[RMDB]
RNA sequence: GGGAACGACUCGAGUAGAGUCGAAAAUGAUGUGGAUCUAUUUGCCCCUCGCUACAAAAGGGUCUCAAGUCUUGUCCUUCAGUGUGUGGGACCCAUCGUGUUACCAAUGGGGCUUGGGGACUGAGGCUGCGCACAGCAGAUUCGUCUGCUGUGCGCAAAAAGAAACAACAACAACAAC
Reactivity to DMS in 0.01 (KOAc 150mM, MgCl2 10mM, bicine 150mM(pH8.5), 24C), signal-to-noise 1, nucleotides 027 to 126: u010g000a060u010g000u000g010g010a100u000c070u000a100u040u010u000g000c020c010c000c020u010c130g020c060u000a100c060a030a100a130a290g000g010g010u000c000u000c020a060a100g000u000c050u000u020g000u050c060c050u010u000c070a060g020u000g030u010g050u000g000g000g030a040c000c010c000a060u020c160g000u010g010u000u000a100c070c030a100a120u000g010g010g010g010c000u000u020g000g000g000g000a080c050u000g000a090g010g000c180
The record gives the reactivity of an RNA of 177 nucleotides to DMS.
Conditions: 150 mM KOAc, 10 mM MgCl2 and 150 mM bicine (pH 8.5), 24 C.
For DMS the reverse transcriptase was MarathonRT.